[RMDB]
RNA sequence: GGGAACGACUCGAGUAGAGUCGAAAAUAGGGACAAGCUCGCUGUCCUCAUCCCAGCACAGCCCGUGGGACGGUUUCCUUGUCCCUAAUGGGACCACGGUCAGAGAUGCCGGGUCUGGUCUGGGCCAGACGAGGUCGUGAUUCGUCACGACCUCGUCAAAAGAAACAACAACAACAAC
Reactivity to DMS in 0.01 (KOAc 150mM, MgCl2 10mM, bicine 150mM(pH8.5), 24C), signal-to-noise 1, nucleotides 027 to 126: u000a050g030g010g000a000c020a020a080g020c140u010c290g000c020u000g020u000c000c000u010c120a080u000c020c010c010a100g000c100a120c060a100g000c010c030c010g000u020g020g000g000a010c040g000g020u010u020u010c200c040u000u000g020u000c000c000c000u000a000a050u010g000g010g010a040c040c020a120c050g010g000u010c060a100g000a230g000a120u000g010c000c000g000g020g000u000c040u000g000g000u000c040u000g000g030g020c070c130a100
Reactivity to 2A3 in 0.01 (KOAc 150mM, MgCl2 10mM, bicine 150mM(pH8.5), 24C), signal-to-noise 1, nucleotides 027 to 126: u100a010g000g010g010a000c020a000a020g020c030u110c200g040c030u050g000u000c000c000u000c000a030u070c030c010c010a010g080c040a010c040a000g000c000c000c000g070u040g040g010g010a000c010g050g000u060u240u140c000c040u050u030g010u000c000c000c000u000a060a120u070g010g000g010a020c010c000a230c040g070g020u100c030a030g060a010g040a300u120g050c030c000g000g030g000u020c040u010g040g020u020c010u030g000g020g000c010c020a040